[RMDB]
RNA sequence: GGGAACGACUCGAGUAGAGUCGAAAAAAAGAACUCGAUGCAUGCUUAGUCAAUGCGCAAGAAAUUGAUGCAGAUUGGCAACAAUUUGAAGAUCCAUAUCAAUGGCAAAUUAGACCAGCACGAUAAGGAGAAUUAGAGGUUUCGACCUCUAAUUCUCAAAAGAAACAACAACAACAAC
Reactivity to 2A3 in 0.01 (KOAc 150mM, MgCl2 10mM, bicine 150mM(pH8.5), 24C), signal-to-noise 7, nucleotides 027 to 126: a000a000a000g160a070a020c040u030c040g040a080u080g020c050a040u030g000c030u090u060a020g020u050c030a020a060u050g030c030g000c030a030a030g110a100a110a040u070u090g050a090u080g010c010a020g080a260u040u040g080g000c010a030a010c010a050a080u040u030u040g030a080a030g120a150u020c020c000a020u070a030u130c090a140a040u040g030g000c010a020a030a050u070u040a060g040a150c020c000a000g010c020a000c030g020a010u030a080a060g100
Reactivity to DMS in 0.01 (KOAc 150mM, MgCl2 10mM, bicine 150mM(pH8.5), 24C), signal-to-noise 4, nucleotides 027 to 126: a040a080a040g000a070a120c050u000c020g010a090u000g020c090a130u000g000c050u010u010a090g000u000c010a050a070u010g010c180g000c030a060a040g020a070a090a020u010u010g010a040u010g010c010a040g020a010u000u000g000g000c110a070a070c070a020a010u000u030u000g000a160a060g010a110u020c010c040a050u010a030u030c110a040a060u010g010g010c020a010a070a060u020u010a100g010a080c050c060a080g000c030a060c050g000a030u040a070a100g010
Annotation:
An RNA of 177 nucleotides, treated with 2A3 and DMS and read out base by base. 2A3 adducts were read by reverse transcription with SuperScript II with manganese. Source: RMDB library OK1LIB, as collected in RNAgym. High DMS reactivity at an A or C suggests that its Watson-Crick edge is free. The reactions ran in a buffer of 150 mM KOAc, 10 mM MgCl2 and 150 mM bicine (pH 8.5), at 24 C.